[RMDB]
Structure probing data (DMS and 2A3) for a 207-nucleotide construct. It was measured as part of the RMDB library OK3TST. DMS adducts were read by reverse transcription with MarathonRT. The reactions ran in a buffer of 150 mM KOAc, 10 mM MgCl2 and 150 mM bicine (pH 8.5), at 24 C. For DMS, 4,071 sequencing reads were counted.
RNA sequence: GGGAACGACUCGAGUAGAGUCGAAAAUGUGGGUUUGCAUACAACGUUACCCACGUAUCCGGCUACGAACACAGCAACGUGACAUUGCACACAAGCAUCAGCCACAGUAACGUAUCGAAUAUGCAUGUCGGUUACUGGAUACAUUACAACUAUCCGGCAGAAUUUAGCAUUUCGAUGCUAAAUUCUGAAAAGAAACAACAACAACAAC
Reactivity to DMS in 0.01 (KOAc 150mM, MgCl2 10mM, bicine 150mM(pH8.5), 24C), signal-to-noise 3, nucleotides 027 to 156: u000g030u000g020g000g010u000u000u020g000c060a180u010a100c130a150a070c050g020u010u000a080c000c020c010a040c100g000u000a050u010c060c030g020g020c080u020a080c030g050a220a110c080a140c040a090g000c000a050a030c070g020u000g000a070c090a300u000u000g000c000a100c110a060c220a080a110g030c020a080u000c050a140g080c000c000a070c060a120g000u010a030a050c010g030u010a110u000c070g010a060a190u000a060u020g040c050a140u000g010u000c020g040g000u000u000a060c020u010g010g000a080u010a040c050a080u000u000a110c130a070a130c110u020a080u000c030c010g010g000
Reactivity to 2A3 in 0.01 (KOAc 150mM, MgCl2 10mM, bicine 150mM(pH8.5), 24C), signal-to-noise 6, nucleotides 027 to 156: u150g010u020g010g020g030u100u130u200g070c070a070u160a240c100a120a050c130g050u080u050a020c000c000c020a000c000g000u010a080u030c020c000g020g000c030u080a050c060g060a140a020c070a010c010a090g050c000a070a070c060g040u030g040a030c020a110u040u160g000c030a030c020a020c020a140a040g010c010a050u060c090a030g030c030c010a080c020a050g060u100a100a030c040g030u050a060u160c030g020a090a060u070a080u240g060c080a030u100g050u040c030g030g020u040u020a020c000u020g000g010a000u010a030c050a050u110u160a040c010a090a030c040u070a050u040c030c000g010g000